Source: RMDB library RNAMAK, as collected in RNAgym. The record gives the reactivity of an RNA of 207 nucleotides to 2A3.

[RMDB]
RNA sequence: GGGAACGACUCGAGUAGAGUCGAAAAGGGGUCGACGCUACCCACCGUCCAAUGGCUCUUGGAUUUAUACACUGAAGCCUCCACGGUGUAUUGUCAGAGCCUAGGACGAGGCGUCGACGGAGGCACCCAAAGAAGACAGAGUUCGCUCUGUCUUCAAGCAUACGUACUCCUUCGGGAGUACGUAUGCAAAAGAAACAACAACAACAAC
Reactivity to 2A3 in 0.01 (KOAc 150mM, MgCl2 10mM, bicine 150mM(pH8.5), 24C), signal-to-noise 2, nucleotides 027 to 156: g150g000g000g020u000c000g010a000c000g020c000u140a300c040c020c050a020c010c010g010u000c000c000a100a190u140g000g000c010u040c070u140u300g040g000a000u080u260u190a000u020a010c030a000c000u020g030a140a020g030c010c000u000c000c010a020c030g030g000u010g000u000a020u010u040g030u030c130a120g000a000g080c000c000u000a000g000g020a000c000g000a000g000g000c000g000u000c010g000a000c010g000g000a000g000g000c010a030c000c030c020a080a150a010g000a000a000g050a000c030a000g060a020g030u040u120c190g100c080u000c010u000g000u000c010u000u000c000a000a000
Conditions: 150 mM KOAc, 10 mM MgCl2 and 150 mM bicine (pH 8.5), 24 C.